The record gives the reactivity of an RNA of 207 nucleotides to DMS and 2A3. 2A3 adducts were read by reverse transcription with SuperScript II with manganese. Source: RMDB library M2RFPK, as collected in RNAgym. Conditions: 150 mM KOAc, 10 mM MgCl2 and 150 mM bicine (pH 8.5), 24 C.
RNA sequence: GGGAACGACUCGAGUAGAGUCGAAAAACGGAUGGUACGCCAUCCGACCAUUGGGUAGAAGCGUUCAAUCAGCACCGUGACGGUGCAGAUGGGAAAUUGCCCAUGAUACUCACCAUACGUGGUGCGAAAAAGCCAUCGGUGUUCGCACCGAUGGCAACAAGUAUGAUUAGUUCGCUAAUCAUACUUGAAAAGAAACAACAACAACAAC
Reactivity to DMS in 0.01 (KOAc 150mM, MgCl2 10mM, bicine 150mM(pH8.5), 24C), signal-to-noise 3, nucleotides 027 to 156: a160c020g000g000a010u000g000g020u000a060c110g060c040c000a010u000c000c010g010a020c060c010a110u000u010g020g010g030u000a040g020a090a100g020c120g020u000u000c030a050a070u000c030a130g020c000a020c010c000g020u000g030a140c180g030g050u000g030c000a020g000a020u000g000g010g000a030a180a120u010u000g010c000c010c000a020u000g010a080u000a030c030u000c030a050c000c030a110u000a120c160g030u000g010g000u000g020c040g000a050a100a080a100a130g010c010c010a020u000c000g010g030u000g010u000u000c300g030c010a030c000c020g000a000u000g010g030c000a000a020
Reactivity to 2A3 in 0.01 (KOAc 150mM, MgCl2 10mM, bicine 150mM(pH8.5), 24C), signal-to-noise 8, nucleotides 027 to 156: a020c010g000g000a000u010g000g020u060a040c230g050c040c000a000u010c000c000g000a010c010c000a100u050u090g020g000g000u040a050g040a160a020g050c040g050u050u070c040a060a070u020c020a030g010c000a010c010c020g110u190g210a130c220g010g000u010g000c010a010g010a010u020g040g000g000a010a140a130u080u060g010c000c000c010a000u010g020a010u050a050c030u030c010a010c000c000a010u060a140c190g090u040g010g000u010g010c030g080a080a040a010a040a010g000c000c000a000u000c000g000g020u010g040u050u090c230g020c080a000c000c000g000a000u000g000g000c000a000a000